[RMDB]
RNA sequence: GGGAACGACUCGAGUAGAGUCGAAAACUCGAAAGAGACCUGCAUAUCUUAGGCAGAUGACCAAGUCACGUCUGAAAAGCGAAAGCCCUAAGAUAUGCAGCUGUGACGACUUGACGCAGAAAAUAAACGAUCAGUACUGAUUCGUCAGUACUGAUCGAAAAGAAACAACAACAACAAC
Reactivity to DMS in 0.01 (KOAc 150mM, MgCl2 10mM, bicine 150mM(pH8.5), 24C), signal-to-noise 4, nucleotides 027 to 126: c000u000c030g000a100a100a080g000a030g000a120c300c000u000g000c010a000u000a000u000c000u020u010a010g000g030c010a020g010a040u000g000a170c230c020a000a000g000u000c010a300c020g000u000c000u000g040a170a080a120a130g000c030g000a120a080a120g010c010c000c000u000a000a000g000a000u000a000u000g000c000a010g000c040u050g000u000g040a050c020g030a010c000u000u000g000a300c000g000c020a000g000a150a060a090a030u040a040a130a210
Reactivity to 2A3 in 0.01 (KOAc 150mM, MgCl2 10mM, bicine 150mM(pH8.5), 24C), signal-to-noise 9, nucleotides 027 to 126: c000u010c010g030a040a040a020g080a010g030a070c010c000u000g000c000a000u000a000u000c000u000u000a000g000g010c010a000g010a020u010g020a030c090c020a010a000g000u010c010a000c050g020u000c000u010g110a240a220a090a020g040c020g050a090a040a010g010c010c000c000u000a010a000g000a000u000a000u000g000c000a000g000c000u010g000u010g020a040c080g000a000c010u000u020g000a010c000g000c010a010g080a050a090a040a050u270a040a110a030